Overview: An RNA of 177 nucleotides, treated with DMS and 2A3 and read out base by base. It was measured as part of the RMDB libraries RFM100 and RFMREP.
RNA sequence: GGGAACGACUCGAGUAGAGUCGAAAACGGCGGCGAUGACCUGCGGGUAGGGGUGAAAGGCCUAUCAAACCCGGAGAUAUCUCGUUCUCCCCGAAAUAGCUUUAGGGCUAGCGUCGCGCGUUAACCCCAGUGGUGCAAAAUUCGUUUUGCACCACUGAAAAGAAACAACAACAACAAC
Reactivity to DMS in 0.01 (KOAc 150mM, MgCl2 10mM, bicine 150mM(pH8.5), 24C), signal-to-noise 6, nucleotides 027 to 126: c010g000g000c010g010g000c000g010a060u020g000a090c040c000u000g010c060g020g000g000u000a220g010g010g000g010u000g000a060a090a080g010g000c090c000u000a060u010c040a070a150a110c030c020c020g000g000a080g000a070u020a030u010c070u010c000g010u010u030c050u000c010c020c010c030g000a050a070a080u010a030g010c010u000u000u040a190g000g000g030c010u000a030g010c020g010u000c000g010c010g020c010g020u000u000a130a150c040c000c000
Reactivity to 2A3 in 0.01 (KOAc 150mM, MgCl2 10mM, bicine 150mM(pH8.5), 24C), signal-to-noise 9, nucleotides 027 to 126: c010g060g000c000g000g010c010g010a030u090g070a140c010c010u050g030c040g020g010g010u030a050g010g020g010g000u040g050a150a090a040g200g010c010c010u060a090u090c050a080a150a120c010c000c010g040g000a020g000a010u140a060u050c070u020c040g030u070u010c040u050c010c000c000c010g050a060a050a050u080a040g020c030u100u120u170a110g060g000g000c020u020a020g030c000g000u000c000g000c010g000c000g010u010u080a090a090c000c000c000